[RMDB]
RNA sequence: GGGAACGACUCGAGUAGAGUCGAAAAAGUUGGGAGGGAGGAGUGGAUAGUUUUGAGUGUAUCAGGUGCACUUGUGGUUCACGCGGAUCCUGCACCCGAACAAACUCCAUCCCCUCCUCCUUCCUGACCCCUUAGGUAGAUUCGUCUACCUAAGGGGAAAAGAAACAACAACAACAAC
Reactivity to DMS in 0.01 (KOAc 150mM, MgCl2 10mM, bicine 150mM(pH8.5), 24C), signal-to-noise 2, nucleotides 027 to 126: a070g010u000u010g010g000g010a030g010g010g000a010g010g000a020g040u010g010g010a010u000a030g040u000u010u000u000g000a050g000u000g020u000a150u000c010a030g010g030u000g020c010a060c300u000u000g030u000g020g010u000u000c010a150c300g010c300g000g000a000u000c000c040u000g000c000a040c010c000c030g010a040a020c070a060a120a130c000u000c010c070a030u010c000c000c020c000u000c000c000u000c010c010u000u000c000c000u000g020a050
Reactivity to 2A3 in 0.01 (KOAc 150mM, MgCl2 10mM, bicine 150mM(pH8.5), 24C), signal-to-noise 3, nucleotides 027 to 126: a000g100u080u060g000g020g000a010g010g030g000a010g000g000a010g000u040g010g030a020u050a110g060u080u100u220u160g030a030g000u060g010u060a190u170c010a010g000g020u000g010c020a030c130u140u160g110u230g100g000u010u030c030a050c260g130c210g050g010a010u020c000c010u020g010c020a000c000c010c010g000a030a000c020a040a200a010c010u000c010c010a000u000c010c000c000c000u000c000c000u010c000c000u000u000c000c000u000g020a010